Chemical mapping of a 207-nucleotide RNA with 2A3.

[RMDB]
RNA sequence: GGGAACGACUCGAGUAGAGUCGAAAACGCAAAGCUGCAGCGCGGCGCUCUGGAGACCUUGCCCCGCGCACUGCUCUUUACAUGGCCCGACGUGAGGGCACUUCGCGGGCAGUGCUGCGGCCUCGUGAAACUGCCCCUAAGUUCGCUUAGGGGCAAACUUGUUAGCAAGGUUCGCCUUGCUAACAAGAAAAGAAACAACAACAACAAC
Reactivity to 2A3 in 0.01 (KOAc 150mM, MgCl2 10mM, bicine 150mM(pH8.5), 24C), signal-to-noise 1, nucleotides 027 to 156: c030g040c010a010a000a020g000c010u060g000c020a020g090c000g010c000g220g120c070g030c040u000c040u060g040g010a050g010a060c000c080u020u030g020c020c050c010c000g000c000g010c000a000c030u070g000c020u050c030u130u200u240a120c090a190u130g080g000c000c010c020g060a160c050g050u010g070a220g040g010g010c010a020c000u060u060c000g040c030g040g040g000c000a000g000u010g020c000u020g000c000g000g010c000c000u010c010g020u040g000a120a000a000c050u030g000c060c000c000c000u010a000a000g000u030u070c210g100c090u000u000a000g000g000g040g000c000a010a000a020

Conditions: 150 mM KOAc, 10 mM MgCl2 and 150 mM bicine (pH 8.5), 24 C.